[RMDB]
Structure probing data (2A3 and DMS) for a 177-nucleotide construct. For 2A3, 6,053 sequencing reads were counted. The reactions ran in a buffer of 150 mM KOAc, 10 mM MgCl2 and 150 mM bicine (pH 8.5), at 24 C.
RNA sequence: GGGAACGACUCGAGUAGAGUCGAAAAGAUAUGGACCUACGAACACGCCUGUCCCGUUGAAAUCGGAAACGAUGGAGGGACCUGCGUACCCGUAGGUCCUAAGUCAAAACUAGGCUUCGGCCUAGAACAUAUUCAAUGCCUUCGGGCAUUGAAUAUGAAAAGAAACAACAACAACAAC
Reactivity to 2A3 in 0.01 (KOAc 150mM, MgCl2 10mM, bicine 150mM(pH8.5), 24C), signal-to-noise 2, nucleotides 027 to 126: g050a020u080a060u140g000g010a010c000c000u010a000c020g030a050a010c060a000c110g020c020c040u020g000u000c000c010c000g140u250u040g000a030a040a000u010c000g000g030a090a040a020c020g000a010u010g000g020a010g010g000g010a010c010c000u000g000c000g010u020a030c040c030c000g000u010a000g040g000u000c000c010u000a010a010g000u000c000a010a000a040a080c000u000a000g000g010c010u060u070c300g170g000c000c000u000a000g010a000a000
Reactivity to DMS in 0.01 (KOAc 150mM, MgCl2 10mM, bicine 150mM(pH8.5), 24C), signal-to-noise 4, nucleotides 027 to 126: g010a030u000a300u010g010g010a020c010c000u000a020c010g010a050a300c110a030c010g010c000c040u010g000u000c000c000c000g040u000u010g000a080a170a040u010c000g000g000a120a110a150c010g010a010u000g000g000a130g020g010g010a010c000c020u000g000c010g020u000a060c220c130c000g010u010a000g000g010u000c000c000u010a010a060g000u010c030a100a060a120a150c010u000a000g000g000c010u000u020c260g020g010c000c000u000a000g010a060a160